[RMDB]
RNA sequence: GGGAACGACUCGAGUAGAGUCGAAAAGGGGUCGAUCUCCUUCUCUAGCGUGGGCGAGGAUCAUGGCUGAAGCCUCCACGGCCAUGGGAGCCUCGGGAGGAGGGAGUCGACGGAGGCACCCAAAAGCCGACUGAACGCUUCGGCGUUCAGUCGGCAACAAAUUGUAUCACUUCGGUGAUACAAUUUGAAAAGAAACAACAACAACAAC
Reactivity to 2A3 in 0.01 (KOAc 150mM, MgCl2 10mM, bicine 150mM(pH8.5), 24C), signal-to-noise 1, nucleotides 027 to 156: g060g000g040g020u030c050g030a090u070c070u070c060c000u060u000c040u080c050u060a240g070c080g120u300g040g030g020c040g040a240g000g010a000u020c000a000u000g000g020c000u020g010a130a010g060c020c000u030c000c000a030c000g000g020c030c000a010u000g000g030g010a030g100c030c010u030c030g030g070g000a100g000g060a010g030g000g030a040g160u020c020g020a030c040g000g010a000g010g020c010a020c040c010c000a030a190a020a030g000c010c000g120a000c000u000g000a010a040c040g010c000u110u200c300g120g040c090g000u070u000c000a000g000u000c000g000g050c000a020a020